[RMDB]
RNA sequence: GGGAACGACUCGAGUAGAGUCGAAAAGAAAGACCAACUCUAACAGUCCACCCGUACAUAUGUUUCCGUGCUUGACAGCGAAGCUCAAUCACGUUACAAUGAAAGGGUAGCCGGUUAUUGAAGUUAACCAUAUAGUAAAAUUCGUUUUACUAUAUGGAAAAGAAACAACAACAACAAC
Reactivity to DMS in 0.01 (KOAc 150mM, MgCl2 10mM, bicine 150mM(pH8.5), 24C), signal-to-noise 9, nucleotides 027 to 126: g010a080a130a100g010a240c050c020a100a100c030u000c020u000a020a020c040a050g010u000c010c060a050c000c000c000g010u000a230c020a020u000a090u000g010u000u010u000c170c030g030u000g000c110u010u000g010a030c090a190g010c160g010a110a110g010c170u000c010a010a020u000c010a010c000g010u010u000a010c020a030a030u000g000a050a150a270g000g000g020u000a050g020c100c010g000g020u000u000a030u000u010g000a100a110g010u000u010a110a150
Reactivity to 2A3 in 0.01 (KOAc 150mM, MgCl2 10mM, bicine 150mM(pH8.5), 24C), signal-to-noise 9, nucleotides 027 to 126: g040a030a060a000g060a010c010c010a020a040c010u000c010u030a020a010c010a010g020u020c030c030a010c000c010c000g070u130a040c010a010u280a100u140g030u020u060u000c080c040g000u000g010c010u010u010g010a030c030a070g120c180g220a180a010g010c040u000c000a010a010u010c000a000c010g010u010u010a010c010a020a020u040g070a270a070a030g010g000g000u000a000g000c010c010g070g000u020u010a050u030u110g050a090a040g040u050u080a070a040
An RNA of 177 nucleotides, treated with DMS and 2A3 and read out base by base. Conditions: 150 mM KOAc, 10 mM MgCl2 and 150 mM bicine (pH 8.5), 24 C. The data come from the RNA Mapping Database (RMDB), libraries RFM100 and RFMREP.